[RMDB]
Conditions: 150 mM KOAc, 10 mM MgCl2 and 150 mM bicine (pH 8.5), 24 C. This 177-nucleotide RNA was probed chemically with DMS and 2A3. The DMS profile rests on 1,137 reads. For 2A3 the reverse transcriptase was SuperScript II with manganese.

RNA sequence: GGGAACGACUCGAGUAGAGUCGAAAACGCUUUGCCAACCCCACGCCCAAGGGCUGCGUAUUCGAAUACGUCUACCUGGCGCGGCCGGACAGUACGAUCGCCGGCCGGUCGGUACACGCCGCGCGGGCAUUCUGCUCCCGUUCGCGGGAGCAGAAUGAAAAGAAACAACAACAACAAC
Reactivity to DMS in 0.01 (KOAc 150mM, MgCl2 10mM, bicine 150mM(pH8.5), 24C), signal-to-noise 2, nucleotides 027 to 126: c170g030c080u000u000u000g000c060c040a100a200c040c030c010c030a110c100g010c000c010c020a160a250g000g000g000c050u000g010c020g020u010a050u000u030c220g000a160a090u000a030c040g010u000c130u010a060c040c000u010g010g020c000g010c010g020g010c000c030g000g010a040c030a130g000u030a050c210g000a100u000c110g040c020c030g010g010c000c020g010g000u000c020g000g020u000a020c200a100c080g000c000c030g000c050g040c300g000g010g020
Reactivity to 2A3 in 0.01 (KOAc 150mM, MgCl2 10mM, bicine 150mM(pH8.5), 24C), signal-to-noise 1, nucleotides 027 to 126: c020g030c060u180u200u200g000c030c000a010a090c090c010c000c000a020c070g040c030c030c010a040a040g000g020g000c020u010g000c000g000u050a050u020u280c150g200a240a050u050a070c010g030u000c020u020a030c010c050u130g060g000c190g000c010g170g030c010c000g010g030a030c080a080g070u230a070c190g060a210u210c090g050c010c010g000g000c000c010g000g000u010c000g000g000u040a050c080a000c070g020c000c000g040c000g000c020g010g000g000